[RMDB]
RNA sequence: GGGAACGACUCGAGUAGAGUCGAAAAGAUAUGGAGAGCUGACGGGAGCUACAGUCGGAAACGACUGAAUAGCAUCGAUCGUCGCUCUCCUAAGUCAAAAGGUUGAUAUCGUUCGCGAUAUCAACCAUCGGUAAUGAUGCUUCGGCAUCAUUACCGAAAAAGAAACAACAACAACAAC
Reactivity to DMS in 0.01 (KOAc 150mM, MgCl2 10mM, bicine 150mM(pH8.5), 24C), signal-to-noise 1, nucleotides 027 to 126: g010a020u000a050u020g000g010a010g010a040g000c020u020g000a010c000g000g020g000a130g010c000u010a040c010a000g010u010c000g000g010a010a000a070c060g010a030c000u000g000a090a190u000a000g010c000a260u020c300g000a120u020c000g000u010c000g010c050u000c000u030c010c000u000a000a020g010u000c010a070a100a120a150g000g000u000u010g000a000u000a000u000c000g010u010u010c260g010c010g010a010u000a000u000c000a020a000c000c050a030
Reactivity to 2A3 in 0.01 (KOAc 150mM, MgCl2 10mM, bicine 150mM(pH8.5), 24C), signal-to-noise 2, nucleotides 027 to 126: g020a020u010a000u060g000g010a010g010a000g030c200u180g030a010c020g000g080g250a110g050c000u020a010c010a010g000u000c020g020g000a050a010a000c000g010a000c010u020g030a160a140u010a000g000c010a070u300c240g280a260u110c010g030u010c000g000c010u000c000u040c000c000u000a000a000g010u000c020a010a030a120a180g020g000u010u010g010a000u010a010u030c060g030u030u060c300g000c040g130a010u010a020u050c000a010a000c000c000a020